[RMDB]
Source: RMDB library OK2TST, as collected in RNAgym. The record gives the reactivity of an RNA of 177 nucleotides to DMS and 2A3.
RNA sequence: GGGAACGACUCGAGUAGAGUCGAAAAGUUAACCUCGAAUCUGUGGUGAUUCGUUGCGUGCUUAGAACGGAGGAGGGCCGAUGGACCGCCUGGAUGACACCGACGAACGCAUCCUCGCCGAGCUGGCGGAGUUGUCAGGAUUCGUCCUGACAACUCCAAAAGAAACAACAACAACAAC
Reactivity to DMS in 0.01 (KOAc 150mM, MgCl2 10mM, bicine 150mM(pH8.5), 24C), signal-to-noise 2, nucleotides 027 to 126: g010u010u000a120a130c110c010u020c030g000a000a060u000c040u010g010u000g020g030u010g000a220u000u000c030g000u020u010g000c160g060u000g000c090u000u010a110g000a180a130c160g020g030a060g020g010a060g000g010g000c030c020g030a180u000g000g010a080c040c020g000c040c000u000g000g000a080u000g010a040c050a060c000c030g010a010c050g000a020a040c170g010c030a040u000c000c020u000c070g000c130c020g000a090g050c050u010g000g000c230
Reactivity to 2A3 in 0.01 (KOAc 150mM, MgCl2 10mM, bicine 150mM(pH8.5), 24C), signal-to-noise 1, nucleotides 027 to 126: g040u070u160a050a060c000c000u030c060g040a100a130u050c030u100g120u200g100g000u050g040a050u000u000c000g010u030u010g040c070g050u000g000c020u080u080a050g020a240a030c020g050g060a030g070g010a050g020g080g010c030c050g220a220u180g000g070a020c000c030g010c000c000u030g020g010a100u050g010a020c030a000c040c020g010a050c000g010a110a000c050g020c080a020u000c000c000u010c000g100c050c000g010a020g030c030u010g040g000c040

The reactions ran in a buffer of 150 mM KOAc, 10 mM MgCl2 and 150 mM bicine (pH 8.5), at 24 C.